Chemical mapping of a 177-nucleotide RNA with 2A3 and DMS. For DMS, 2,327 sequencing reads were counted. The reactions ran in a buffer of 150 mM KOAc, 10 mM MgCl2 and 150 mM bicine (pH 8.5), at 24 C.
[RMDB]
RNA sequence: GGGAACGACUCGAGUAGAGUCGAAAAGCGAUCAGCGCGAUCUCAGCGUACGUCGGUACACGGCCACUGUGUACGAUCUGUGCGCGAGGCCUGCGCUGGCGCGCGCAGUGGCCGGAUCGUGAGUACCGCAUAGCCGGGUAUUCGUACCCGGCUAUGCAAAAGAAACAACAACAACAAC
Reactivity to 2A3 in 0.01 (KOAc 150mM, MgCl2 10mM, bicine 150mM(pH8.5), 24C), signal-to-noise 2, nucleotides 027 to 126: g040c020g010a140u090c080a060g090c030g000c000g050a100u040c040u020c110a040g040c010g080u040a030c020g060u020c080g080g060u060a040c110a030c000g040g020c040c050a110c050u090g000u000g020u020a020c010g030a210u040c070u170g080u040g020c010g020c020g020a040g040g130c050c040u080g000c010g000c020u020g010g000c040g000c000g000c000g000c030a020g020u070g020g000c010c000g020g000a060u060c050g010u020g090a040g020u040a040c010c040
Reactivity to DMS in 0.01 (KOAc 150mM, MgCl2 10mM, bicine 150mM(pH8.5), 24C), signal-to-noise 1, nucleotides 027 to 126: g010c020g000a150u010c040a050g010c030g020c040g000a060u000c040u000c040a180g030c010g020u000a020c010g020u010c050g010g020u000a020c020a140c000g000g010c050c120a040c040u000g030u000g000u010a030c010g010a030u020c050u010g010u010g010c000g000c020g010a090g000g010c100c020u000g010c000g030c000u010g010g000c030g010c070g010c060g000c020a020g000u000g000g030c000c000g010g000a000u000c060g030u010g000a130g020u000a070c060c040

Values are in units of 0.01, from 0 to 300, in steps of 10.
It was measured as part of the RMDB library OK2TRN.